[RMDB]
RNA sequence: GGGAACGACUCGAGUAGAGUCGAAAAGGAUGGAUUUGUCGCGCCAAUCUGGACAAUCUGAAUCGUGCACACGUUUGAUGAAAGCAUCGUGUCAGAGGUGCGCGGCCCAGACAAGUCUUGCAUUGUAAUGUCCAUGAAGUACGGUCCAAGAGACGCAAACCACACUUCUUUUCGAAGAAGUGUGGUUAAAAGAAACAACAACAACAAC
Reactivity to DMS in 0.01 (KOAc 150mM, MgCl2 10mM, bicine 150mM(pH8.5), 24C), signal-to-noise 3, nucleotides 027 to 156: g020g030a030u000g020g020a090u000u000u000g010u020c070g020c020g030c140c010a080a120u000c030u000g030g000a030c020a120a070u000c020u020g000a040a050u010c020g050u000g010c030a090c040a090c090g020u040u010u000g030a080u010g000a120a100a190g010c140a120u010c070g010u010g020u000c030a060g020a060g000g030u000g020c000g020c030g020g010c040c020c030a070g020a030c020a040a090g020u000c010u010u000g000c160a140u000u010g040u010a070a120u000g010u010c040c010a120u030g020a080a110g010u000a060c050g010g010u000c020c010a050a120g000a150g010a050c030g010c060a130
Reactivity to 2A3 in 0.01 (KOAc 150mM, MgCl2 10mM, bicine 150mM(pH8.5), 24C), signal-to-noise 4, nucleotides 027 to 156: g080g010a060u110g010g030a010u070u060u180g050u060c030g000c000g000c030c020a010a060u000c010u050g020g020a030c010a040a110u050c040u100g030a030a070u090c040g020u060g020c030a010c020a010c110g090u090u120u150g080a100u040g060a120a130a040g080c030a020u130c060g070u030g040u090c010a030g040a010g020g050u100g020c000g000c000g010g000c000c010c000a020g000a010c050a080a110g030u030c020u050u060g050c060a070u010u060g050u190a120a040u100g020u010c030c050a070u070g040a010a020g060u130a030c060g030g000u000c030c010a080a010g030a010g000a050c020g000c020a000